[RMDB]
Conditions: 150 mM KOAc, 10 mM MgCl2 and 150 mM bicine (pH 8.5), 24 C. An RNA of 177 nucleotides, treated with DMS and 2A3 and read out base by base. It was measured as part of the RMDB library OK1LIB.
RNA sequence: GGGAACGACUCGAGUAGAGUCGAAAACGGCUUCGAGCAGGGCGGCGAGCCGCGCGGUAUCUGCGGCGGAGGUUUUGCCCAGUUGUUCGGACAAACGCGCCGCCAACACGCAGCCGGCGGCGAUGGCCGCAUAAAUGGCAUUCGUGCCAUUUAUGCGAAAAGAAACAACAACAACAAC
Reactivity to DMS in 0.01 (KOAc 150mM, MgCl2 10mM, bicine 150mM(pH8.5), 24C), signal-to-noise 5, nucleotides 027 to 126: c080g010g000c020u000u000c020g000a150g020c050a060g000g010g010c030g000g000c020g000a170g020c020c040g000c010g010c050g000g020u040a090u030c080u010g000c020g000g020c000g000g010a090g010g010u000u010u010u000g010c010c000c010a130g000u020u010g000u000u020c060g000g020a080c090a020a040a100c040g000c050g020c010c000g000c000c030a080a100c170a090c180g000c090a080g020c080c040g010g020c000g010g010c010g000a060u030g020g000c080
Reactivity to 2A3 in 0.01 (KOAc 150mM, MgCl2 10mM, bicine 150mM(pH8.5), 24C), signal-to-noise 7, nucleotides 027 to 126: c030g050g000c020u040u030c060g030a050g010c040a080g030g020g010c040g030g000c040g020a020g030c010c020g040c050g030c040g100g080u190a190u180c060u120g030c010g080g000c040g020g060a100g060g030u040u030u070u120g020c020c000c010a050g040u080u100g030u050u070c030g020g030a030c030a000a070a010c060g020c020g000c040c000g000c000c010a060a040c100a010c120g040c020a030g050c030c040g020g000c020g010g010c010g010a060u100g070g010c010